Background:
Chemical mapping of a 177-nucleotide RNA with DMS and 2A3. The 2A3 profile rests on 5,045 reads. The RNA was probed in 150 mM KOAc, 10 mM MgCl2 and 150 mM bicine (pH 8.5) at 24 C. Values cover nucleotides 27 to 126. Source: RMDB library TTRDEL, as collected in RNAgym. For DMS the reverse transcriptase was MarathonRT. For 2A3 the reverse transcriptase was SuperScript II with manganese.

RNA sequence: GGGAACGACUCGAGUAGAGUCGAAAAGAUAUGGAGUGUCGAAACGAGGGUCUUCGGAAACGAAGACCUACCCACCGAAUUUCCGACACUCCUAAGUCAAAGUCCGGUCAGUUCGCUGACCGGACAAGAAAGUAAAUAGCUUCGGCUAUUUACUUUCAAAAGAAACAACAACAACAAC
Reactivity to DMS in 0.01 (KOAc 150mM, MgCl2 10mM, bicine 150mM(pH8.5), 24C), signal-to-noise 3, nucleotides 027 to 126: g000a030u000a190u000g000g010a010g050u000g010u000c010g000a020a020a050c160g020a150g000g010g000u000c000u010u000c000g010g000a050a030a110c010g010a010a010g010a010c010c010u010a000c080c070c070a300c200c080g020a110a130u000u010u000c030c010g000a020c010a010c010u000c000c010u000a010a070g010u000c010a110a130a160g000u000c000c000g010g000u000c000a010g000u000u010c210g010c000u010g000a010c000c000g000g010a000c000a020a050
Reactivity to 2A3 in 0.01 (KOAc 150mM, MgCl2 10mM, bicine 150mM(pH8.5), 24C), signal-to-noise 2, nucleotides 027 to 126: g010a020u020a020u080g000g000a010g000u000g000u000c000g010a020a040a070c160g040a160g000g000g010u000c000u000u010c000g010g000a030a020a000c000g000a000a000g010a000c000c000u000a010c010c010c010a080c030c080g130a260a300u040u050u030c080c030g010a000c000a000c010u000c000c010u000a020a020g000u000c050a140a090a030g010u000c010c000g000g010u000c010a010g010u030u130c150g010c220u000g010a000c020c000g000g010a000c010a000a010